Annotation:
This 177-nucleotide RNA was probed chemically with 2A3 and DMS. High 2A3 reactivity points to a flexible backbone, as in loops and unpaired stretches. The reactions ran in a buffer of 150 mM KOAc, 10 mM MgCl2 and 150 mM bicine (pH 8.5), at 24 C. The 2A3 profile rests on 964 reads. It was measured as part of the RMDB library OK2TRN.

RNA sequence: GGGAACGACUCGAGUAGAGUCGAAAAGAUCACUAGUAGCGGAUCUGCAUGCGCGCGUACGAGUACGCGCUCACGCGUGUGAUCGUACUGAUCGCUCGAGGUACGCGAUCUGUCAUCAGUAGCAGACCUCGCCGUCAGGGUUCGCCCUGACGGCGAGAAAAGAAACAACAACAACAAC
Reactivity to 2A3 in 0.01 (KOAc 150mM, MgCl2 10mM, bicine 150mM(pH8.5), 24C), signal-to-noise 1, nucleotides 027 to 126: g000a040u040c010a050c140u110a080g030u150a070g300c030g010g080a100u010c030u090g000c020a030u070g000c010g000c000g010c000g020u060a030c010g070a100g130u000a000c010g020c030g020c000u000c000a000c010g030c000g010u060g040u020g000a020u030c020g010u040a030c020u030g010a070u000c010g000c020u030c080g080a100g070g090u080a030c020g010c000g030a080u090c020u060g060u120c080a300u070c020a130g090u040a000g000c020a000g020a060c020
Reactivity to DMS in 0.01 (KOAc 150mM, MgCl2 10mM, bicine 150mM(pH8.5), 24C), signal-to-noise 1, nucleotides 027 to 126: g030a030u000c030a130c170u040a100g030u000a080g030c030g000g000a050u000c040u010g030c030a120u010g020c190g000c080g000c100g030u000a000c040g000a130g030u000a000c040g040c000g000c000u000c080a070c090g030c000g060u000g030u000g020a010u000c000g000u020a070c040u010g010a060u000c070g000c050u000c080g000a050g000g010u000a050c050g010c000g000a130u000c000u000g000u020c210a090u010c070a070g010u000a080g020c030a100g000a070c090